[RMDB]
RNA sequence: GGGAACGACUCGAGUAGAGUCGAAAAGAAAAACGAAAGGAAGAGGAACUUCUUCGUUCCAAAUGGCUGCUUACAUGAACAGCAAUGUGCAGUGUGUCAACAACUCUCUUCUUUAAAGACUGAGCAAAUUUAAUCCAUAGUUCGCUAUGGAUUAAAUAAAAGAAACAACAACAACAAC
Reactivity to DMS in 0.01 (KOAc 150mM, MgCl2 10mM, bicine 150mM(pH8.5), 24C), signal-to-noise 9, nucleotides 027 to 126: g020a050a050a080a070a100c110g010a070a050a060g000g000a030a020g000a100g010g010a110a120c120u010u000c070u010u000c030g010u000u010c000c020a050a080a080u030g020g010c020u000g000c040u010u030a080c090a050u010g010a090a090c090a050g010c080a090a040u010g010u000g010c060a050g000u000g010u020g010u010c070a070a110c140a070a080c110u010c010u000c000u000u000c020u010u010u010a070a080a080g010a100c080u010g000a070g010c140a080a080
Reactivity to 2A3 in 0.01 (KOAc 150mM, MgCl2 10mM, bicine 150mM(pH8.5), 24C), signal-to-noise 9, nucleotides 027 to 126: g040a000a040a010a000a010c060g060a090a030a010g110g020a010a010g030a050g070g070a070a050c010u040u020c000u070u040c050g020u030u000c020c000a030a060a040u130g070g000c000u010g010c000u080u060a020c010a040u080g060a180a030c030a060g060c060a060a060u040g010u020g010c010a010g010u020g010u050g040u160c030a040a030c010a050a070c070u010c010u000c000u070u000c000u020u130u070a120a180a020g060a040c070u080g030a020g080c050a040a080